[RMDB]
RNA sequence: GGGAACGACUCGAGUAGAGUCGAAAAUAUUGCAAAAUGUUUGCCUUGACAGUAAACCUAUAUGGCAGAGUCUAGAAGACAAAAUGAAAAAGAUUAACAAUUCAACAGCAAGUGGCUUCACAGUGUCCAGUUCAUACCGUUUCGACGGUAUGAACUGAAAAGAAACAACAACAACAAC
Reactivity to DMS in 0.01 (KOAc 150mM, MgCl2 10mM, bicine 150mM(pH8.5), 24C), signal-to-noise 1, nucleotides 027 to 126: u040a060u010u000g000c110a020a010a060a120u000g000u020u000u000g000c060c050u000u010g060a040c120a100g010u000a070a050a080c040c050u000a180u020a130u020g010g010c030a020g020a240g000u000c050u010a110g010a090a090g010a060c090a040a000a060a080u000g000a060a030a080a090a060g000a120u000u000a000a060c110a070a070u000u000c010a040a070c110a090g000c050a040a020g030u000g000g030c070u010u010c040a020c020a110g010u010g010u000c100
Reactivity to 2A3 in 0.01 (KOAc 150mM, MgCl2 10mM, bicine 150mM(pH8.5), 24C), signal-to-noise 1, nucleotides 027 to 126: u050a030u010u170g030c060a020a110a000a220u150g000u050u040u060g010c010c000u110u080g040a060c030a050g060u070a040a080a080c000c000u100a090u030a050u300g060g000c020a020g050a010g080u010c050u080a060g000a120a010g010a040c060a020a040a000a010u100g090a090a130a000a000a020g060a110u160u090a030a030c050a040a080u060u020c020a000a040c000a020g050c010a070a020g030u010g050g090c000u030u020c070a020c010a100g050u070g050u210c070